[RMDB]
RNA sequence: GGGAACGACUCGAGUAGAGUCGAAAACUGCAAAACCUGGCAGCUAUGUAUGGAGGCAGGCCCAGCUCUUCAAGAGGAGGGAAGCCAAGAAACAAAGAGGAAGAGGUUUAUCUGGCAAGACUGAGGCCAUGACUUGUGUUUUCGAACACAAGUCAUGAAAAGAAACAACAACAACAAC
Reactivity to 2A3 in 0.01 (KOAc 150mM, MgCl2 10mM, bicine 150mM(pH8.5), 24C), signal-to-noise 2, nucleotides 027 to 126: c020u050g060c000a030a030a040a180c020c010u020g060g000c010a040g040c040u130a050u190g090u020a090u100g020g040a030g030g000c030a010g070g040c000c000c010a040g020c010u030c050u130u120c050a120a020g040a070g120g040a020g010g030g000a010a020g000c000c010a020a000g020a030a050a010c080a010a060a030g080a030g070g040a010a050g020a040g090g010u050u040u040a090u060c030u040g030g000c000a010a070g030a060c080u070g040a070g070g000c010
Reactivity to DMS in 0.01 (KOAc 150mM, MgCl2 10mM, bicine 150mM(pH8.5), 24C), signal-to-noise 4, nucleotides 027 to 126: c040u000g030c070a080a070a080a090c090c050u010g000g000c020a040g000c070u010a080u000g020u010a070u000g000g020a160g010g010c040a050g020g000c040c030c040a080g010c030u000c030u000u000c160a090a150g010a060g000g000a130g010g010g010a050a070g030c080c040a030a140g010a060a080a070c100a060a080a060g010a040g000g000a050a070g000a040g010g010u010u000u010a080u010c070u010g000g010c040a040a040g000a070c090u000g000a090g010g000c120